Structure probing data (DMS and 2A3) for a 177-nucleotide construct. The DMS profile rests on 1,932 reads. The 2A3 profile rests on 4,393 reads. For DMS the reverse transcriptase was MarathonRT. Source: RMDB library M2PK50, as collected in RNAgym. The reactions ran in a buffer of 150 mM KOAc, 10 mM MgCl2 and 150 mM bicine (pH 8.5), at 24 C.
[RMDB]
RNA sequence: GGGAACGACUCGAGUAGAGUCGAAAACGGAUACGCUUCGGCGUAUCCGAAAUAAAGCCGGAAUAAAGCGCGGGCAAAAACCGGCAAUAAAGCGCGCGCAAAAAACGCGUCACUUCGGUGACGCGAACUAUGUACCUGAGUUCGCUCAGGUACAUAGAAAAGAAACAACAACAACAAC
Reactivity to DMS in 0.01 (KOAc 150mM, MgCl2 10mM, bicine 150mM(pH8.5), 24C), signal-to-noise 2, nucleotides 027 to 126: c020g010g010a000u000a000c020g020c000u000u020c200g030g020c000g010u000a010u000c000c000g010a000a040a040u010a070a130a120g000c000c010g000g010a250a090u010a040a150a150g030c010g020c000g000g000g000c030a060a060a030a130a060c000c020g010g010c030a070a020u010a040a140a080g000c000g000c010g000c000g000c020a000a030a050a030a050a080c020g020c000g000u000c000a000c010u000u000c190g010g030u000g000a010c020g010c000g010a030a050
Reactivity to 2A3 in 0.01 (KOAc 150mM, MgCl2 10mM, bicine 150mM(pH8.5), 24C), signal-to-noise 3, nucleotides 027 to 126: c010g000g010a010u010a000c020g010c000u030u070c230g090g000c000g010u000a000u000c000c000g000a020a000a010u100a010a060a000g000c010c010g020g060a080a100u130a140a190a070g010c020g020c010g020g110g000c070a060a030a040a030a140c020c010g040g000c050a010a100u130a060a040a010g010c040g000c000g000c000g080c120a110a050a000a000a010a050c020g000c000g000u010c000a000c010u030u070c200g080g010u020g000a000c000g010c000g000a000a000